[RMDB]
Conditions: 150 mM KOAc, 10 mM MgCl2 and 150 mM bicine (pH 8.5), 24 C.
Structure probing data (2A3 and DMS) for a 177-nucleotide construct.
RNA sequence: GGGAACGACUCGAGUAGAGUCGAAAACAACUGUUAUCUUGCCACUGCAUUGUUAACACUCCAACAAACAGAGUUGAAGUUUAAUCCACCUGCUCUACAAAGGGCUGGUGAAGCUGCUAACUUUUGUCAAGAAGAAUCAGUUCGCUGAUUCUUCUUGAAAAGAAACAACAACAACAAC
Reactivity to 2A3 in 0.01 (KOAc 150mM, MgCl2 10mM, bicine 150mM(pH8.5), 24C), signal-to-noise 2, nucleotides 027 to 126: c020a030a020c070u030g000u110u040a110u040c020u010u040g030c060c040a150c100u110g010c020a040u190u000g010u030u010a010a010c000a000c050u000c020c010a040a020c060a070a180a030c050a030g040a000g040u050u070g090a030a050g000u030u060u090a050a120u020c070c000a000c020c010u020g000c000u000c010u040a120c100a060a200a040g020g000g000c000u010g010g010u010g000a000a010g000c010u040g040c040u040a020a050c000u050u100u090u140g050u040
Reactivity to DMS in 0.01 (KOAc 150mM, MgCl2 10mM, bicine 150mM(pH8.5), 24C), signal-to-noise 2, nucleotides 027 to 126: c040a120a130c240u020g010u000u000a090u010c050u010u000g000c020c150a080c140u000g010c060a030u000u000g030u000u020a040a080c110a040c090u000c020c030a030a040c120a080a130a040c170a090g000a050g000u000u010g010a070a010g000u000u010u020a060a130u000c100c010a010c030c000u000g030c010u000c000u010a080c300a090a130a110g020g000g010c000u030g000g030u000g020a040a020g050c080u000g020c110u020a020a090c050u000u010u030u020g000u000